Structure probing data (2A3 and DMS) for a 177-nucleotide construct. For DMS the reverse transcriptase was MarathonRT. The reactions ran in a buffer of 150 mM KOAc, 10 mM MgCl2 and 150 mM bicine (pH 8.5), at 24 C. The 2A3 profile rests on 11,289 reads. Reactivities are given for positions 27 through 126.
RNA sequence: GGGAACGACUCGAGUAGAGUCGAAAAAGACAUUUAGAAGAUGGUAUGUCUGAAGGGACUUAUGUUUAGGCACCCACUUGCAAUGAAUCAGCAUUCUUAAUGAAUGGGUCUAAUUGGGAACAAGUGCCUCCUAUAUGCAAUUCGUUGCAUAUAGGAGAAAAGAAACAACAACAACAAC
Reactivity to 2A3 in 0.01 (KOAc 150mM, MgCl2 10mM, bicine 150mM(pH8.5), 24C), signal-to-noise 8, nucleotides 027 to 126: a000g040a010c020a020u100u160u180a160g040a200a030g080a100u100g040g080u110a030u070g020u010c020u030g030a060a060g060g010g000a010c020u110u090a080u170g100u040u080u080a040g020g000c020a060c010c010c010a020c030u010u040g010c020a030a070u070g060a070a040u090c030a040g180c010a030u030u010c010u070u270a200a130u270g010a020a010u020g020g030g000u010c020u060a090a070u050u050g010g000g040a060a050c030a050a030g000u010g070c000
Reactivity to DMS in 0.01 (KOAc 150mM, MgCl2 10mM, bicine 150mM(pH8.5), 24C), signal-to-noise 9, nucleotides 027 to 126: a050g010a060c020a030u000u000u000a110g010a100a110g010a090u000g010g010u000a040u010g010u000c010u010g010a130a080g000g010g010a130c060u000u010a050u010g010u000u000u000a060g010g010c080a090c080c050c020a060c070u000u000g010c040a020a070u000g000a080a070u000c060a080g020c020a030u000u000c010u000u010a090a110u010g010a030a020u000g010g000g010u000c030u000a060a050u000u000g010g000g010a120a160c080a050a060g010u000g000c130